[RMDB]
RNA sequence: GGGAACGACUCGAGUAGAGUCGAAAAGGGGGAUACGCACAGUGACCAUUCAAGCUGAUUGUGACACUGUGUAGGGUAGGUACUGAUUGGUUCUUCAAUCAGUAGAUGGGAAGAAAAUGCCAUAGGAGAUUUUAUCAUUCUUCGGAAUGAUAAAAUCAAAAGAAACAACAACAACAAC
Reactivity to 2A3 in 0.01 (KOAc 150mM, MgCl2 10mM, bicine 150mM(pH8.5), 24C), signal-to-noise 2, nucleotides 027 to 126: g060g010g030g040g070a060u090a110c060g020c000a000c000a000g010u020g030a110c000c000a020u000u010c050a110a160g210c130u120g060a070u030u060g090u130g020a020c000a000c000u010g000u000g010u020a020g010g030g000u050a060g080g070u000a000c010u010g010a000u000u010g000g030u070u110c020u030u070c020a010a000u000c000a000g000u010a000g020a110u080g000g020g000a000a040g050a030a140a030a030u110g040c060c030a080u100a050g060g060a130
Reactivity to DMS in 0.01 (KOAc 150mM, MgCl2 10mM, bicine 150mM(pH8.5), 24C), signal-to-noise 2, nucleotides 027 to 126: g000g010g010g010g010a100u010a060c250g020c020a020c000a020g020u010g000a160c030c010a020u000u010c010a150a160g010c280u010g010a020u000u010g030u030g030a120c020a010c010u000g000u000g020u000a080g000g020g000u000a040g010g000u000a020c020u000g000a010u000u000g000g000u010u000c180u000u000c000a020a000u000c010a010g010u000a000g000a160u010g000g010g000a140a120g010a050a030a050a050u000g010c070c090a060u020a070g020g010a190
Source information: Structure probing data (2A3 and DMS) for a 177-nucleotide construct. For DMS the reverse transcriptase was MarathonRT. Conditions: 150 mM KOAc, 10 mM MgCl2 and 150 mM bicine (pH 8.5), 24 C. For 2A3, 2,154 sequencing reads were counted.